The record gives the reactivity of an RNA of 207 nucleotides to DMS and 2A3. The reactions ran in a buffer of 150 mM KOAc, 10 mM MgCl2 and 150 mM bicine (pH 8.5), at 24 C. The DMS profile rests on 1,793 reads. 2A3 adducts were read by reverse transcription with SuperScript II with manganese. It was measured as part of the RMDB library OK3TST.

RNA sequence: GGGAACGACUCGAGUAGAGUCGAAAAUUCAUUUUAAUUUUACUUCCAUAGGAAUUUUCCAUUCAGUAGUCUAAAUCUAUGUGGUGAUUAAAGGUAUCAAAAACAAUAGUGUUGGCCAGGCACAGUGGCUCACACCUGUAAUCCCAACACUUUGGGAAUAUUACUAGGACUUCGGUCCUAGUAAUAUAAAAGAAACAACAACAACAAC
Reactivity to DMS in 0.01 (KOAc 150mM, MgCl2 10mM, bicine 150mM(pH8.5), 24C), signal-to-noise 1, nucleotides 027 to 156: u030u000c040a090u000u010u000u010a010a120u000u020u000u000a060c010u020u010c180c020a180u010a130g000g020a020a120u000u000u000u000c020c020a200u000u000c140a150g000u000a050g030u000c020u020a020a060a100u000c020u000a050u020g040u000g020g030u000g010a070u010u000a020a020a070g010g030u000a030u000c020a020a070a110a030a030c030a050a100u000a100g060u000g020u010u010g030g000c140c100a050g010g040c110a080c050a010g030u000g000g040c030u000c100a030c030a020c030c030u010g070u000a040a090u010c060c000c020a030a030c060a070c060u000u000u000g020g010g000a080
Reactivity to 2A3 in 0.01 (KOAc 150mM, MgCl2 10mM, bicine 150mM(pH8.5), 24C), signal-to-noise 1, nucleotides 027 to 156: u010u050c000a000u000u010u000u250a180a100u070u120u030u000a190c000u040u100c000c050a180u080a040g040g000a080a050u140u050u010u100c060c000a050u170u160c070a040g080u050a030g000u070c120u180a000a000a200u020c020u040a020u070g010u000g070g090u030g030a030u030u030a070a080a000g140g000u080a070u220c110a050a030a050a050a130c080a050a100u180a250g020u080g030u030u030g000g000c000c000a000g000g000c020a020c000a070g000u100g010g090c000u010c070a000c000a050c040c000u020g000u030a130a000u020c000c000c000a030a000c070a030c100u020u200u030g040g000g010a100